[RMDB]
RNA sequence: GGGAACGACUCGAGUAGAGUCGAAAAGAUAUGGACUAGAGUGCUCUUUGAUCGUGACUCGUACGAUCACUAUAUCGGAAACGAUAUAGUGAUUUGAAAGUCACGGGAGAGCCUCUAGUCCUAAGUCGUGACUAGAGAAGUUCGCUUCUCUAGUCACAAAAGAAACAACAACAACAAC
Reactivity to DMS in 0.01 (KOAc 150mM, MgCl2 10mM, bicine 150mM(pH8.5), 24C), signal-to-noise 1, nucleotides 027 to 126: g000a090u000a230u000g000g010a020c000u000a000g000a010g010u000g030c000u000c000u000u010u020g000a080u000c000g010u010g000a030c000u000c060g000u020a300c300g010a020u000c000a010c000u000a000u000a000u000c000g010g010a140a120a190c010g000a010u000a000u000a000g010u000g010a010u000u000u000g010a220a080a040g010u000c010a000c010g020g000g000a000g000a010g010c010c010u010c000u010a000g000u000c000c000u000a000a040g030u000c100
Reactivity to 2A3 in 0.01 (KOAc 150mM, MgCl2 10mM, bicine 150mM(pH8.5), 24C), signal-to-noise 2, nucleotides 027 to 126: g040a050u160a070u170g000g000a000c010u020a020g010a020g050u300g050c010u020c020u280u300u130g170a210u210c020g000u010g000a010c030u030c290g050u250a120c170g020a000u000c010a010c010u010a000u000a000u010c000g000g010a040a040a080c000g000a010u000a000u000a010g000u020g010a000u000u010u030g030a000a000a000g000u000c000a000c000g000g000g000a000g010a010g000c010c000u000c010u000a000g000u010c000c000u000a000a000g000u020c000
An RNA of 177 nucleotides, treated with DMS and 2A3 and read out base by base. For 2A3 the reverse transcriptase was SuperScript II with manganese. Reactivities are given for positions 27 through 126. For DMS the reverse transcriptase was MarathonRT. Source: RMDB library TTRINS, as collected in RNAgym. For 2A3, 3,290 sequencing reads were counted. For DMS, 1,529 sequencing reads were counted.